[RMDB]
Chemical mapping of a 207-nucleotide RNA with 2A3 and DMS. Reactivities are given for positions 27 through 156. For 2A3, 1,932 sequencing reads were counted. It was measured as part of the RMDB library M2RFPK. For DMS, 3,262 sequencing reads were counted. The reactions ran in a buffer of 150 mM KOAc, 10 mM MgCl2 and 150 mM bicine (pH 8.5), at 24 C.
RNA sequence: GGGAACGACUCGAGUAGAGUCGAAAAGAAAGAGCAGCACACAGCGACGAAGAUCCGGGCUGGAUUCUAGAGCACGGUCGCCCCAGCGCGGCCCGGGAAGUCAGUGGCAAGACCGCCUUAGCAGCAACAGAGUCGCCCAGGUUCGCCUGGGCGACAACAAUGUAGUUGUGUUCGCACAACUACAUUGAAAAGAAACAACAACAACAAC
Reactivity to 2A3 in 0.01 (KOAc 150mM, MgCl2 10mM, bicine 150mM(pH8.5), 24C), signal-to-noise 2, nucleotides 027 to 156: g070a020a060a000g030a010g040c020a000g010c010a020c020a030c070a100g080c020g070a020c020g060a090a030g000a010u020c010c020g030g050g000c040u070g000g060a140u080u080c040u100a040g010a000g060c050a010c110g050g000u030c020g020c010c000c030c030a090g020c120g000c010g020g010c000c000c010g000g000g010a020a010g030u020c050a010g000u010g050g020c020a040a020g020a060c020c010g020c020c010u070u060a020g000c040a000g030c000a030a070c010a080g070a010g080u000c000g010c000c000c000a000g020g010u040u070c120g030c070c000u000g000g040g000c000g000a000c000a010a000
Reactivity to DMS in 0.01 (KOAc 150mM, MgCl2 10mM, bicine 150mM(pH8.5), 24C), signal-to-noise 2, nucleotides 027 to 156: g010a100a040a070g000a100g080c000a150g010c000a080c040a110c070a140g020c030g020a100c060g010a110a110g000a130u000c010c020g010g000g000c030u010g000g030a130u000u000c040u000a060g000a090g040c040a080c050g020g040u000c050g020c000c000c000c130a120g000c050g010c030g020g000c000c020c020g030g000g040a060a050g010u000c030a120g010u000g010g010c070a100a090g010a130c090c030g000c020c020u000u000a050g030c030a130g000c060a050a100c090a150g010a140g010u000c000g040c000c000c000a010g010g030u030u000c300g050c030c000u000g000g000g010c000g030a000c000a000a040